[RMDB]
RNA sequence: GGGAACGACUCGAGUAGAGUCGAAAAGAAAGAAAGAAAGCGGUUGGGUGGGUCCAUCGACCGUCGUGGCGUAUUCGGACGCUUUACCACGACGCGAGGAAAUAGCGAGACCGACCACCCCCUUUCACAGAGGUAUAGUAGUUCGCUACUAUACCAAUCUUAAGUUGGUGUUCGCACCAACUUAAGAAAAAGAAACAACAACAACAAC
Reactivity to 2A3 in 0.01 (KOAc 150mM, MgCl2 10mM, bicine 150mM(pH8.5), 24C), signal-to-noise 1, nucleotides 027 to 156: g020a000a050a000g050a040a080a030g010a010a050a010g080c160g190g030u180u170g140g000g000u040g050g000g000u000c030c000a100u180c000g000a010c020c020g000u000c010g000u000g000g070c060g010u130a180u100u220c040g110g000a040c040g000c000u020u060u170a030c000c000a000c000g000a000c010g010c010g000a040g020g050a020a230a020u110a010g050c030g010a010g020a100c020c010g020a020c000c010a000c010c000c000c010c000u010u000u020c090a080c030a060g120a040g000g000u000a000u010a000g000u000a000g010u000u100c130g040c180u000a000c000u010a000u000a000c000c000a000a000

This 207-nucleotide RNA was probed chemically with 2A3. The RNA was probed in 150 mM KOAc, 10 mM MgCl2 and 150 mM bicine (pH 8.5) at 24 C. The 2A3 profile rests on 739 reads. The data come from the RNA Mapping Database (RMDB), library M2RFPK.